[RMDB]
RNA sequence: GGGAACGACUCGAGUAGAGUCGAAAAGAUAUGGACCGUGAAGAAGACUUUAACAAUGAUGUUCGCGUUUGAUCGGAAACGAUCAAACGCGAAUUGAGUUAAAGAGAACUUCCACGGUCCUAAGUCAGUCUUUUACCUAGUUCGCUAGGUAAAAGACAAAAGAAACAACAACAACAAC
Reactivity to 2A3 in 0.01 (KOAc 150mM, MgCl2 10mM, bicine 150mM(pH8.5), 24C), signal-to-noise 2, nucleotides 027 to 126: g050a030u080a030u120g010g010a010c000c020g020u010g000a100a250g040a020a020g300a300c000u030u000u020a050a010c030a210a300u290g060a100u300g200u060u030c000g000c000g000u050u000u030g010a000u010c010g050g030a060a040a050c020g010a030u000c010a040a000a010c000g000c000g010a000a000u000u010g000a010g000u010u010a000a010a000g100a040g040a040a030c020u000u020c040c020a000c000g000g000u010c010c000u000a000a000g000u000c000a000
Reactivity to DMS in 0.01 (KOAc 150mM, MgCl2 10mM, bicine 150mM(pH8.5), 24C), signal-to-noise 2, nucleotides 027 to 126: g010a040u000a300u020g010g000a000c000c000g020u010g000a180a170g000a030a040g040a200c000u000u000u000a000a010c000a140a230u010g010a120u010g020u010u010c000g020c010g030u000u000u000g000a020u010c000g000g000a080a070a170c000g010a020u000c020a000a000a000c000g010c000g000a000a000u000u000g000a210g010u000u000a000a010a000g000a130g000a140a150c010u000u000c040c020a010c010g010g010u000c000c000u010a010a070g000u010c060a150
About this RNA:
Structure probing data (2A3 and DMS) for a 177-nucleotide construct. Reactivities are rounded to 0.1 and cut off at 0 and 3. 2A3 adducts were read by reverse transcription with SuperScript II with manganese. Source: RMDB library TTRINS, as collected in RNAgym.